[RMDB]
RNA sequence: GGGAACGACUCGAGUAGAGUCGAAAAUUAAAUAACGUGAAGAAGCAGAGGAAGGACUGCAAGAACACGAACCACCAAAGAUCAAGAACAGCAGGAAGGAGCUGAAGAAGAUGAACCACCAAAAAAAACAUCAUUAUUAGUUCGCUAAUAAUGAUGUAAAAGAAACAACAACAACAAC
Reactivity to 2A3 in 0.01 (KOAc 150mM, MgCl2 10mM, bicine 150mM(pH8.5), 24C), signal-to-noise 3, nucleotides 027 to 126: u070u050a060a000a040u170a090a040c030g010u020g070a140a060g020a090a010g070c020a000g020a030g110g050a110a030g050g030a040c000u020g000c050a050a040g030a040a000c040a010c040g020a060a020c030c020a020c000c020a080a100a000g070a030u050c050a010a030g040a090a030c010a020g030c010a000g060g030a060a030g020g010a030g020c020u040g040a040a010g040a010a000g000a030u060g010a020a010c020c020a010c010c070a020a020a070a020a020a000a000
Reactivity to DMS in 0.01 (KOAc 150mM, MgCl2 10mM, bicine 150mM(pH8.5), 24C), signal-to-noise 4, nucleotides 027 to 126: u000u010a080a070a120u000a120a100c060g010u000g030a050a120g000a130a170g010c030a030g010a120g010g020a080a060g010g010a080c030u000g010c050a040a130g010a090a100c060a030c060g020a080a130c060c050a050c080c060a060a030a070g000a040u010c080a080a100g010a100a070c070a060g010c050a040g000g010a060a070g020g000a080g020c060u000g010a060a040g020a060a040g000a030u000g010a070a080c060c040a060c100c060a010a000a010a080a050a050a040
This 177-nucleotide RNA was probed chemically with 2A3 and DMS.
The 2A3 profile rests on 5,479 reads.
Values are in units of 0.01, from 0 to 300, in steps of 10.
The reactions ran in a buffer of 150 mM KOAc, 10 mM MgCl2 and 150 mM bicine (pH 8.5), at 24 C.
It was measured as part of the RMDB library M2PK90.